An RNA of 177 nucleotides, treated with DMS and 2A3 and read out base by base. The RNA was probed in 150 mM KOAc, 10 mM MgCl2 and 150 mM bicine (pH 8.5) at 24 C. It was measured as part of the RMDB library M2PK50. 2A3 adducts were read by reverse transcription with SuperScript II with manganese. Values cover nucleotides 27 to 126. For DMS the reverse transcriptase was MarathonRT.
[RMDB]
RNA sequence: GGGAACGACUCGAGUAGAGUCGAAAAACAUUGGCCUUCGGGCCAAUGUACUGGAAUUAAAGCCGAAAGGCUACGCAUUCCUUAUUUGGCGAAAGCCUGCGAGAUUAUGUAAGUUCGCUUACAUAAAACUGUCGUACACUUUCGAGUGUACGACAGUAAAAGAAACAACAACAACAAC
Reactivity to DMS in 0.01 (KOAc 150mM, MgCl2 10mM, bicine 150mM(pH8.5), 24C), signal-to-noise 1, nucleotides 027 to 126: a140c000a030u000u000g020g010c000c000u000u020c170g010g010g010c000c000a000a010u000g000u000a050c090u010g000g000a040a000u020u000a110a170a070g030c000c000g010a100a050a120g060g020c000u000a080c120g020c250a070u000u000c000c000u010u020a100u000u020u030g020g040c000g000a100a050a160g010c020c020u000g000c190g000a080g000a150u010u000a000u000g010u010a010a010g000u010u010c250g040c010u000u000a000c000a030u000a010a020a090
Reactivity to 2A3 in 0.01 (KOAc 150mM, MgCl2 10mM, bicine 150mM(pH8.5), 24C), signal-to-noise 1, nucleotides 027 to 126: a000c000a000u000u000g000g000c020c010u000u060c270g030g030g040c070c000a000a000u000g000u000a010c010u030g000g030a030a010u050u070a250a110a000g010c040c000g000a080a030a020g000g030c010u010a020c070g020c000a020u010u060c010c000u070u070a180u080u180u070g010g000c000g070a100a020a010g010c000c000u030g050c140g050a180g020a180u090u040a010u020g000u000a000a000g030u030u080c190g010c070u020u010a010c000a000u030a040a080a010
For 2A3, 1,152 sequencing reads were counted.